[RMDB]
RNA sequence: GGGAACGACUCGAGUAGAGUCGAAAAGAGGCUUAAGCUGCAGGCGGAGUGCCGAUCUCCUGAUUCGGCAAACACUAUAACUGCCGAAAAUAACGACAGUUUCGAUUACGCCUUAGCUGCAUAAUCGCGGAAUCUGCUUUGCACUGCUCCGAGCGGGGAAAUCUUCCACGUUCGCGUGGAAGAUUUCAAAAGAAACAACAACAACAAC
Reactivity to 2A3 in 0.01 (KOAc 150mM, MgCl2 10mM, bicine 150mM(pH8.5), 24C), signal-to-noise 1, nucleotides 027 to 156: g130a030g040g050c050u060u050a010a050g030c010u020g020c050a030g000g000c010g000g010a000g030u110g030c080c070g060a080u000c030u060c050c060u140g030a070u060u050c000g010g000c010a050a060a000c120a040c040u150a080u120a300a040c070u040g020c000c000g020a040a030a020a040u180a040a030c000g030a000c020a030g000u000u120u070c020g000a010u040u040a000c000g040c030c000u060u130a090g050c140u110g000c040a030u010a000a030u040c000g000c020g040g030a010a030u000c010u030g000c000u080u090u020g000c020a000c190u040g000c010u020c090c050g030a040g000c020g000g040g010